Chemical mapping of a 177-nucleotide RNA with 2A3 and DMS.
The RNA was probed in 150 mM KOAc, 10 mM MgCl2 and 150 mM bicine (pH 8.5) at 24 C.
The DMS profile rests on 4,762 reads.
[RMDB]
RNA sequence: GGGAACGACUCGAGUAGAGUCGAAAAGGCCUCGUCCUGUUAAGCGUACUGAGGUCAUCUCGGCCCGUGCGGACGCUUAACAGUCCUCGCACCGUGAAGUAACACGAGAUUGAUUCAAAGUGGGCCAGGGUAAGAUUUACUUCGGUAAAUCUUACCCAAAAGAAACAACAACAACAAC
Reactivity to 2A3 in 0.01 (KOAc 150mM, MgCl2 10mM, bicine 150mM(pH8.5), 24C), signal-to-noise 5, nucleotides 027 to 126: g030g000c000c020u060c020g060u090c020c010u010g020u020u050a070a020g000c030g010u010a140c100u080g080a070g060g040u020c010a120u090c100u070c080g010g000c000c000c000g020u050g090c070g030g010a010c000g000c010u020u020a020a020c000a000g000u010c010c030u050c040g010c010a060c020c000g010u010g090a080a050g120u130a200a010c020a000c010g050a060g010a060u030u100g070a040u090u100c110a100a070a040g090u120g060g000g000c040c020a040
Reactivity to DMS in 0.01 (KOAc 150mM, MgCl2 10mM, bicine 150mM(pH8.5), 24C), signal-to-noise 3, nucleotides 027 to 126: g010g000c000c000u000c060g060u000c090c010u000g020u020u010a010a010g000c030g000u010a110c020u020g020a140g030g000u020c020a150u030c080u020c150g000g000c000c010c090g000u010g030c160g010g000a020c020g000c000u000u010a010a050c030a010g000u010c030c030u000c090g000c130a070c120c020g000u000g000a100a130g040u040a130a080c040a100c010g000a120g030a150u020u010g010a130u010u020c140a040a060a140g000u040g000g000g000c000c000a170